[RMDB]
The record gives the reactivity of an RNA of 177 nucleotides to DMS and 2A3.
RNA sequence: GGGAACGACUCGAGUAGAGUCGAAAAUUGGGUAUGCUUUCCAUGGGACACGUUCUUAUUCCUCAAAGUGAUCUUCGUUGGAUGCAGCAGACUGAUGCCGGUGGUAUCACUCACUUCCGAUCGGGAACAUAACCCGAAGGUUCGCCUUCGGGUUAUGAAAAGAAACAACAACAACAAC
Reactivity to DMS in 0.01 (KOAc 150mM, MgCl2 10mM, bicine 150mM(pH8.5), 24C), signal-to-noise 4, nucleotides 027 to 126: u010u000g010g010g010u010a060u000g000c040u000u010u010c000c020a070u000g010g010g010a050c050a040c040g000u010u010c080u010u010a170u000u000c030c010u000c150a080a090a150g010u000g000a090u000c020u000u010c070g020u000u000g010g010a050u000g000c090a040g010c120a080g010a120c140u000g010a050u000g010c030c030g020g020u000g030g020u010a040u000c030a050c030u000c020a050c170u000u000c010c010g010a100u010c150g010g000g010a060a160
Reactivity to 2A3 in 0.01 (KOAc 150mM, MgCl2 10mM, bicine 150mM(pH8.5), 24C), signal-to-noise 3, nucleotides 027 to 126: u120u020g060g000g000u110a040u080g030c020u070u070u000c000c020a030u040g000g000g070a030c000a000c050g110u100u040c060u070u090a170u110u080c020c020u070c060a110a080a010g040u050g120a300u030c030u200u130c030g100u030u070g020g020a030u070g020c060a020g000c020a020g070a120c060u070g000a040u050g050c020c030g130g120u130g060g010u030a020u090c010a030c030u030c000a030c020u030u000c000c000g170a240u090c080g040g010g010a000a020
About this RNA:
2A3 adducts were read by reverse transcription with SuperScript II with manganese.